About this RNA: An RNA of 177 nucleotides, treated with 2A3 and read out base by base. The RNA was probed in 150 mM KOAc, 10 mM MgCl2 and 150 mM bicine (pH 8.5) at 24 C. 2A3 adducts were read by reverse transcription with SuperScript II with manganese. High 2A3 reactivity points to a flexible backbone, as in loops and unpaired stretches.

[RMDB]
RNA sequence: GGGAACGACUCGAGUAGAGUCGAAAACGUCAGAUGACGAAGUCGGUCCAUCUGCGGUAAGAGACCGACAUAGAGUUCGAAGCAGAACGAACAACCGCAGAUACACGAUUGGAGUGUGAAUGAGAGACCCUGACUGCGUAUUCGUACGCAGUCAGGGAAAAGAAACAACAACAACAAC
Reactivity to 2A3 in 0.01 (KOAc 150mM, MgCl2 10mM, bicine 150mM(pH8.5), 24C), signal-to-noise 1, nucleotides 027 to 126: c000g000u000c000a100g020a300u140g000a180c020g020a050a000g000u000c000g040g000u000c030c200a000u000c000u000g000c000g250g000u070a240a000g030a000g000a000c000c000g000a000c000a000u100a020g030a000g000u000u000c160g000a140a000g220c210a030g000a270a120c100g000a040a000c000a020a020c040c010g100c090a000g000a000u000a090c080a100c000g100a100u100u190g100g060a160g030u050g000u000g040a110a080u250g000a090g100a080g000a160